This 177-nucleotide RNA was probed chemically with DMS and 2A3. High DMS reactivity at an A or C suggests that its Watson-Crick edge is free. The data come from the RNA Mapping Database (RMDB), library TTRINS. Values cover nucleotides 27 to 126. Conditions: 150 mM KOAc, 10 mM MgCl2 and 150 mM bicine (pH 8.5), 24 C.

RNA sequence: GGGAACGACUCGAGUAGAGUCGAAAAGAUAUGGACUCGAACUACUUAAUGGCACUGCGCUGAACGUGGAUUCGGAAACGAAUCCCACGAUACGAAUAAGCAGUGCCAUUAAGCGAGUCCUAAGUCACACCAGAAUAGACUUCGGUCUAUUCUGGUGAAAAGAAACAACAACAACAAC
Reactivity to DMS in 0.01 (KOAc 150mM, MgCl2 10mM, bicine 150mM(pH8.5), 24C), signal-to-noise 2, nucleotides 027 to 126: g010a010u000a180u000g040g010a010c000u010c010g010a110a080c040u030a300c000u000u000a010a000u010g000g000c000a040c000u030g010c000g000c180u010g020a110a180c020g040u000g000g000a110u000u000c000g020g000a050a070a100c000g000a030a010u000c210c020c000a010c000g000a100u010a070c180g000a140a120u030a030a300g000c010a010g020u000g000c000c000a000u020u000a010a000g000c000g000a010g000u010c000c000u000a010a050g000u000c030a230
Reactivity to 2A3 in 0.01 (KOAc 150mM, MgCl2 10mM, bicine 150mM(pH8.5), 24C), signal-to-noise 2, nucleotides 027 to 126: g010a000u060a040u140g000g010a000c020u010c010g010a010a050c050u220a040c020u300u000a000a000u000g000g000c000a000c000u010g020c090g110c180u150g060a160a050c030g010u030g040g000a010u010u020c020g030g020a000a040a000c000g020a010a000u090c090c140c000a010c000g040a070u200a160c070g180a300a280u260a300a000g000c000a000g030u000g020c000c000a010u000u000a000a000g000c000g000a000g000u000c000c000u000a000a000g000u040c020a000